RNA sequence: GGGAACGACUCGAGUAGAGUCGAAAAGGUUGGCCUCAUUAACCAGCGCUAACAAGCCGUGCAAAUGCUCUGAUUGGGCAGCUUUUAUUGGAUAGUACCAGGCCCUUAGCAGGAUACCCACUUAAUGCAUAUUAACGUCGUUCGCGACGUUAAUAUGAAAAGAAACAACAACAACAAC
Reactivity to DMS in 0.01 (KOAc 150mM, MgCl2 10mM, bicine 150mM(pH8.5), 24C), signal-to-noise 5, nucleotides 027 to 126: g010g010u000u000g020g010c010c010u000c070a070u010u010a170a140c050c030a040g020c040g010c040u010a040a050c130a120a100g000c020c030g010u000g010c070a070a070a070u000g010c030u000c040u010g010a170u010u000g010g010g010c000a060g000c070u000u000u010u000a090u000u000g000g010a130u000a080g010u000a080c040c040a100g010g020c020c040c060u000u000a050g010c040a060g000g010a140u000a100c010c000c010a110c160u000u010a060a070u010g010
Reactivity to 2A3 in 0.01 (KOAc 150mM, MgCl2 10mM, bicine 150mM(pH8.5), 24C), signal-to-noise 5, nucleotides 027 to 126: g060g000u020u010g020g030c000c020u000c020a050u020u050a020a030c020c010a020g000c040g020c060u040a050a020c030a100a010g010c020c030g050u040g020c040a060a110a110u070g000c010u000c020u100g170a220u100u160g020g000g020c020a020g000c030u080u120u060u100a140u120u060g050g020a020u030a130g020u030a070c020c040a040g040g020c000c000c000u050u060a010g000c020a010g020g060a040u110a120c010c010c010a030c020u050u140a060a030u100g020